Notes
The data come from the RNA Mapping Database (RMDB), library RNAMAK. The record gives the reactivity of an RNA of 207 nucleotides to 2A3 and DMS. The RNA was probed in 150 mM KOAc, 10 mM MgCl2 and 150 mM bicine (pH 8.5) at 24 C. For DMS, 4,060 sequencing reads were counted. For 2A3, 3,568 sequencing reads were counted. DMS adducts were read by reverse transcription with MarathonRT. DMS (dimethyl sulfate) methylates the pairing face of unpaired adenines and cytosines.
RNA sequence: GGGAACGACUCGAGUAGAGUCGAAAAAAAAGCGUACUACUUUCGCAUCGAUCUAACGAUGGGAACGGCUAUACGAUAAGAAGCUUCCCAAAUAGGAAGCUUCUUUUGACGUAUAGUUAUCAGAAAUUCACGUUAGGGAGCGAAAGUAUCGCAAAAACAAUUGAUACGAGUUCGCUCGUAUCAAUUGAAAAGAAACAACAACAACAAC
Reactivity to 2A3 in 0.01 (KOAc 150mM, MgCl2 10mM, bicine 150mM(pH8.5), 24C), signal-to-noise 2, nucleotides 027 to 156: a000a000a000a010g050c040g030u080a050c030u000a000c000u030u000u010c000g020c030a230u280c050g070a060u020c020u000a000a000c030g270a300u080g030g000g070a090a050c080g030g000c000u000a000u000a010c000g040a040u000a090a000g000a010a000g000c000u010u040c020c020c050a160a210a060u160a050g000g000a000a000g010c000u000u000c020u000u000u010u010g060a010c000g000u000a000u010a000g000u010u020a100u170c010a010g120a020a100a030u090u050c020a020c010g010u000u000a000g040g000g000a000g000c000g000a000a000a010g010u000a000u160c000g000c010a020a110a000a000a000
Reactivity to DMS in 0.01 (KOAc 150mM, MgCl2 10mM, bicine 150mM(pH8.5), 24C), signal-to-noise 2, nucleotides 027 to 156: a070a060a010a120g050c030g010u000a130c110u000a020c000u020u000u000c000g050c020a180u000c120g000a070u000c030u000a000a000c010g000a100u000g000g020g000a210a100c040g000g000c000u000a000u000a000c010g020a190u010a030a050g010a030a050g030c000u000u010c000c020c020a050a120a130u010a070g020g020a040a010g020c000u000u010c000u000u000u000u000g010a210c110g010u000a010u000a020g020u000u000a000u010c060a120g010a060a080a140u000u010c000a060c000g000u000u000a010g010g010g000a060g040c010g010a020a030a050g030u000a010u000c000g030c000a050a050a060a070a100